[RMDB]
RNA sequence: GGGAACGACUCGAGUAGAGUCGAAAAGCUAUCUGUAUCCUGAUGCCGCUCCAGAAGUUGGGAUGUAUCUUGUGAUAGCUGGGUUUUAUAAGUGCAAUAUUAAAGUAAACCAUGAGUCUUUUAAGCCGCCAACAAGGAAGUUCGCUUCCUUGUUGGCAAAAGAAACAACAACAACAAC
Reactivity to 2A3 in 0.01 (KOAc 150mM, MgCl2 10mM, bicine 150mM(pH8.5), 24C), signal-to-noise 2, nucleotides 027 to 126: g020c000u000a060u000c030u000g120u100a220u150c020c000u000g050a000u040g000c010c060g040c010u110c100c070a180g040a190a070g180u090u140g060g030g030a040u070g000u050a030u040c020u090u200g040u060g020a040u070a000g020c000u020g030g020g000u000u160u000u000a110u110a210a000g000u110g090c000a000a010u070a120u200u220a090a090a120g110u040a040a000a170c000c070a050u110g130a000g220u050c000u090u050u010u070a060a000g000c050c050
Reactivity to DMS in 0.01 (KOAc 150mM, MgCl2 10mM, bicine 150mM(pH8.5), 24C), signal-to-noise 2, nucleotides 027 to 126: g000c000u000a000u000c020u030g000u000a080u010c000c030u000g030a000u010g000c210c100g020c060u020c010c070a200g050a130a170g010u030u000g000g000g020a030u010g020u010a010u010c060u030u050g030u080g000a000u000a000g010c000u000g000g010g010u000u000u010u010a020u000a050a050g010u000g010c070a170a150u000a180u000u010a030a050a120g000u010a030a120a140c060c070a110u000g000a250g000u020c030u010u000u000u000a070a160g010c080c000